[RMDB]
RNA sequence: GGGAACGACUCGAGUAGAGUCGAAAAGAUAUGGAUCUAGAGCGAUAAGAAGGUAUCGGAAACGAUACCCUUCUUUUGACGCUCAAAAUCCUAAGUCAAAAGCUGCAAGUCUUCGGACUUGCAGCAAGUUUUACUCCACGUUCGCGUGGAGUAAAACAAAAGAAACAACAACAACAAC
Reactivity to DMS in 0.01 (KOAc 150mM, MgCl2 10mM, bicine 150mM(pH8.5), 24C), signal-to-noise 1, nucleotides 027 to 126: g010a000u000a300u000g010g000a000u010c020u000a300g000a010g030c000g010a190u010a010a000g000a000a000g010g030u000a000u000c000g010g000a120a060a100c020g010a010u000a010c170c020c010u000u020c000u000u000u000u030g000a170c050g030c000u000c010a000a070a300a000u000c000c000u000a050a110g000u000c000a090a090a170a120g000c000u000g030c040a000a040g000u000c010u020u000c190g040g020a000c000u000u000g000c000a000g000c010a000a000